RNA sequence: GGGAACGACUCGAGUAGAGUCGAAAAGAUAUGGAUAACCUGCACAACAGCUUGGAUUUAGCUUCGGAAACGAAGCUUGUCAGCUGGUGUGGUUAUCCUAAGUCAAAGGGUUGCUUCGGCAACCCAACGAAGCAAUUACCUUCGGGUAAUUGCUUCGAAAAGAAACAACAACAACAAC
Reactivity to 2A3 in 0.01 (KOAc 150mM, MgCl2 10mM, bicine 150mM(pH8.5), 24C), signal-to-noise 1, nucleotides 027 to 126: g030a040u060a020u130g000g000a000u000a040a000c040c000u290g000c040a030c020a300a300c000a100g140c000u090u300g280g010a160u300u300u240a000g000c020u000u000c000g000g020a030a070a050c010g010a000a000g000c050u000u000g000u020c020a020g000c010u020g030g020u020g000u030g000g020u000u000a010u000c000c000u000a090a000g090u060c040a050a120a160g000g000g000u000u010g000c040u040u090c300g200g020c000a000a000c010c030c010a020a000
Reactivity to DMS in 0.01 (KOAc 150mM, MgCl2 10mM, bicine 150mM(pH8.5), 24C), signal-to-noise 1, nucleotides 027 to 126: g000a060u010a300u000g000g010a000u000a010a000c010c030u000g050c040a030c010a080a140c000a000g020c000u010u010g040g010a000u000u000u000a030g000c010u000u000c000g040g000a080a100a230c010g000a050a000g000c000u000u000g000u000c000a080g000c000u000g000g000u000g060u000g020g000u000u010a010u000c000c000u010a010a110g000u030c070a120a180a090g010g000g030u000u000g010c010u020u000c240g020g000c040a000a010c000c000c000a020a000